[RMDB]
RNA sequence: GGGAACGACUCGAGUAGAGUCGAAAAAAUCUGGAGCUGCUUUUAGGGAGUUGCAGAUGGCGCAGGCCUCCCUUCCUCCUCAAGGAAGCCAAAGACACCAUCACAAUCAGGCAGCCAGGAGCCAGGGCAAAUGUUUACGCUUCGGCGUAAACAUUUGAAAAGAAACAACAACAACAAC
Reactivity to DMS in 0.01 (KOAc 150mM, MgCl2 10mM, bicine 150mM(pH8.5), 24C), signal-to-noise 3, nucleotides 027 to 126: a020a070u000c020u000g000g030a170g000c020u010g020c010u000u050u020u030a160g030g020g020a110g000u000u000g000c130a060g020a000u020g000g010c050g020c080a180g010g010c020c040u000c040c000c010u010u000c070c050u020c060c060u020c080a120a110g010g020a140a060g000c000c030a050a050a100g000a200c060a100c050c010a050u000c020a210c050a010a030u030c060a050g000g020c020a010g000c000c060a270g010g000a080g010c000c040a080g010g040g010
Reactivity to 2A3 in 0.01 (KOAc 150mM, MgCl2 10mM, bicine 150mM(pH8.5), 24C), signal-to-noise 3, nucleotides 027 to 126: a000a000u030c030u020g030g020a060g020c000u030g000c020u120u070u150u190a120g100g020g030a110g010u030u040g070c040a070g010a040u010g000g000c070g000c040a020g030g000c000c000u060c020c010c000u000u050c010c020u040c020c000u060c040a010a040g000g010a010a020g000c010c010a110a060a060g030a070c050a020c020c000a030u040c010a000c020a030a060u110c040a040g000g060c000a000g000c000c010a040g030g000a010g050c030c000a040g020g040g010
This 177-nucleotide RNA was probed chemically with DMS and 2A3. For 2A3, 2,255 sequencing reads were counted. Conditions: 150 mM KOAc, 10 mM MgCl2 and 150 mM bicine (pH 8.5), 24 C. The DMS profile rests on 3,130 reads. The data come from the RNA Mapping Database (RMDB), library RFM100.